[RMDB]
This 177-nucleotide RNA was probed chemically with 2A3 and DMS. DMS adducts were read by reverse transcription with MarathonRT. The 2A3 profile rests on 2,618 reads. Conditions: 150 mM KOAc, 10 mM MgCl2 and 150 mM bicine (pH 8.5), 24 C.

RNA sequence: GGGAACGACUCGAGUAGAGUCGAAAAAGGUUUCUUAAUUGAACUUGUGGAUGUGAAUAUCAAGUUGCUAGUGGGCCAUACGGGGUAAGCUCGUCUGGCGAUGCGGGAUGAACCGAACGCAAAGUUACAUAUUCGUAAUCUUCGGAUUACGAAUAUGAAAAGAAACAACAACAACAAC
Reactivity to 2A3 in 0.01 (KOAc 150mM, MgCl2 10mM, bicine 150mM(pH8.5), 24C), signal-to-noise 2, nucleotides 027 to 126: a010g090g000u060u040u030c020u040u110a270a230u130u080g080a020a030c000u020u020g010u020g040g050a080u040g060u050g070a030a040u040a010u080c030a050a010g010u030u020g030c010u030a010g030u080g020g010g000c000c010a030u040a120c040g020g030g000g030u060a040a040g060c000u010c040g040u010c040u010g030g000c010g020a040u050g020c020g010g020g030a030u040g020a060a050c020c010g020a060a000c030g000c060a180a010a010g030u030u040a060
Reactivity to DMS in 0.01 (KOAc 150mM, MgCl2 10mM, bicine 150mM(pH8.5), 24C), signal-to-noise 4, nucleotides 027 to 126: a080g020g000u000u010u000c000u000u000a110a130u000u010g000a040a030c020u000u000g010u000g010g000a130u000g000u000g020a110a080u000a100u000c030a050a200g010u000u000g010c020u000a050g040u010g010g010g000c010c020a060u010a200c090g010g010g000g020u010a100a110g010c010u010c020g000u010c020u000g000g000c020g000a030u000g020c240g000g000g000a090u000g000a100a050c060c030g010a100a090c070g000c060a030a030a080g010u000u010a140